[RMDB]
RNA sequence: GGGAACGACUCGAGUAGAGUCGAAAAGAUAUGGACUCGUAGAUAGCGAACUACAGAAACACAUCGGAAACGAUGUGUCUGCGCUGUAGAGUCCUAAGUCAAACAGACGUCCUUCGGGACGUCUGAACCUUAAUCUACUGUUCGCAGUAGAUUAAGGAAAAGAAACAACAACAACAAC
Reactivity to DMS in 0.01 (KOAc 150mM, MgCl2 10mM, bicine 150mM(pH8.5), 24C), signal-to-noise 9, nucleotides 027 to 126: g000a040u000a300u000g000g010a000c000u000c000g000u010a170g010a060u010a020g010c000g010a090a060c110u020a300c040a010g000a070a080a040c000a000c000a010u000c000g010g000a150a090a250c010g010a010u000g010u000g010u000c010u000g000c030g000c000u000g000u000a130g010a020g000u000c000c000u000a020a080g000u000c030a110a120a290c010a000g000a010c000g000u000c000c000u000u020c260g020g000g010a010c000g010u000c000u000g000a040a110
Reactivity to 2A3 in 0.01 (KOAc 150mM, MgCl2 10mM, bicine 150mM(pH8.5), 24C), signal-to-noise 7, nucleotides 027 to 126: g020a010u090a050u190g010g010a010c010u010c060g170u300a080g050a300u120a020g030c020g040a080a070c120u240a060c300a000g050a050a300a010c000a000c010a000u000c010g030g030a060a070a040c010g000a000u010g000u000g000u000c000u010g000c000g010c010u010g020u070a030g020a000g000u000c000c000u010a040a020g040u010c020a080a060a090c000a010g000a000c000g000u000c010c000u050u140c300g130g000g000a000c000g010u000c000u000g000a000a000
Source: RMDB library TTRDES, as collected in RNAgym.
Chemical mapping of a 177-nucleotide RNA with DMS and 2A3.
For DMS the reverse transcriptase was MarathonRT.
The 2A3 profile rests on 22,263 reads.
2A3 adducts were read by reverse transcription with SuperScript II with manganese.